[RMDB]
RNA sequence: GGGAACGACUCGAGUAGAGUCGAAAACCAGCAGUCAUGACCUACCAGGCUGCGGUGCGGCUCGCCGCACAGGUCAUCCCUCAUCGGGCGCGUCCUGCGUCCUUCCACGCCAACCCACAAGGGAUCUAAAACACGUUGGGCUUCGGCCCAACGUGAAGCCAGUACAUAUGUUCGCAUAUGUACUGGCAAAAGAAACAACAACAACAAC
Reactivity to 2A3 in 0.01 (KOAc 150mM, MgCl2 10mM, bicine 150mM(pH8.5), 24C), signal-to-noise 2, nucleotides 027 to 156: c010c000a000g000c000a000g010u000c040a230u130g020a050c000c060u110a150c120c080a030g000g000c000u000g000c020g000g040u030g010c000g020g020c070u120c210g120c010c000g000c000a010c000a010g030g000u020c020a010u060c030c020c010u090c030a160u140c080g000g020g000c010g000c010g030u170c030c070u180g010c010g020u010c000c020u030u000c010c020a060c040g040c000c020a110a110c040c010c000a100c040a080a100g020g010g000a020u040c060u240a070a050a020a000c010a000c000g000u000u000g000g000g010c010u020u050c140g070g000c000c000c000a000a000c000g000u080g000a010a000